[RMDB]
The record gives the reactivity of an RNA of 177 nucleotides to 2A3 and DMS.
The reactions ran in a buffer of 150 mM KOAc, 10 mM MgCl2 and 150 mM bicine (pH 8.5), at 24 C.
The data come from the RNA Mapping Database (RMDB), library M2PK50.
Values cover nucleotides 27 to 126.
Values are in units of 0.01, from 0 to 300, in steps of 10.

RNA sequence: GGGAACGACUCGAGUAGAGUCGAAAAGAUCACCUGUUCGCAGGUGAUCAAUCUCCCACAUGAUCGAAGUCUCACAGCCUCGUUGCCCACGAGGCACGGGCGUAUUGAUCCGCUUCGGCGGAUCAAAGGUGUUGAUGGAAUUCGUUCCAUCAACACCAAAAGAAACAACAACAACAAC
Reactivity to 2A3 in 0.01 (KOAc 150mM, MgCl2 10mM, bicine 150mM(pH8.5), 24C), signal-to-noise 2, nucleotides 027 to 126: g000a000u000c000a000c000c000u000g000u030u060c200g020c110a000g000g000u000g000a000u000c000a010a000u000c000u020c010c040c000a060c030a090u300g040a080u160c140g080a140a080g140u030c040u020c050a110c040a100g010c010c010u140c070g060u140u140g030c010c020c000a120c090g050a250g000g000c000a000c010g000g000g060c010g010u040a050u020u080g000a000u020c000c000g020c000u020u070c180g130g000c010g000g000a000u000c010a000a000a020
Reactivity to DMS in 0.01 (KOAc 150mM, MgCl2 10mM, bicine 150mM(pH8.5), 24C), signal-to-noise 2, nucleotides 027 to 126: g000a020u000c000a000c010c000u000g010u010u010c220g020c000a000g000g010u000g000a000u020c000a030a080u000c250u000c000c000c010a120c290a040u010g000a110u000c130g010a070a160g020u000c030u000c100a140c230a130g000c020c000u000c060g010u000u030g000c050c060c060a200c190g000a110g000g000c000a000c070g040g000g000c090g010u000a020u010u000g000a010u000c000c000g010c010u000u000c130g040g040c010g010g000a000u000c000a000a010a040

In probing experiments dimethyl sulfate is read out at A N1 and C N3, which are open when not base-paired.